Structure probing data (2A3 and DMS) for a 177-nucleotide construct. The 2A3 profile rests on 5,183 reads. Reactivities are given for positions 27 through 126. The RNA was probed in 150 mM KOAc, 10 mM MgCl2 and 150 mM bicine (pH 8.5) at 24 C.
RNA sequence: GGGAACGACUCGAGUAGAGUCGAAAAGAAAUAAACUACACUAAGUCGUGUGUAGGAACGACGAAAACGAUGCUAAGCGCUGCAUCGAAAAGCGCGAGCUAUAUACAGUUAUAGCGAAAACUGGAAAGGGAUAGUAUAUCUUCGGAUAUACUAUCCCAAAAGAAACAACAACAACAAC
Reactivity to 2A3 in 0.01 (KOAc 150mM, MgCl2 10mM, bicine 150mM(pH8.5), 24C), signal-to-noise 5, nucleotides 027 to 126: g100a010a090a030u250a020a110a030c010u030a010c020a000c010u100a100a110g160u150c060g060u060g000u010g000u070a000g000g060a010a000c030g190a000c020g040a010a060a010a000c060g020a000u040g000c020u050a100a120g100c030g030c110u070g010c020a080u130c140g050a040a060a000a030g030c030g010c020g010a000g010c020u010a020u010a010u030a100c090a020g060u070u030a020u050a040g050c040g060a020a070a040a070c050u110g040g070a050a050a090
Reactivity to DMS in 0.01 (KOAc 150mM, MgCl2 10mM, bicine 150mM(pH8.5), 24C), signal-to-noise 4, nucleotides 027 to 126: g000a060a080a090u040a070a090a080c020u000a010c030a010c000u000a060a090g010u040c110g050u000g000u000g010u010a030g000g010a080a080c130g000a090c050g010a060a060a110a180c060g000a030u000g010c030u010a070a130g010c100g050c150u000g020c020a060u020c080g000a030a070a090a130g000c030g010c020g010a170g010c020u000a000u010a020u010a160c220a140g010u010u010a020u010a000g010c040g010a050a020a060a030c140u000g010g000a050a110a140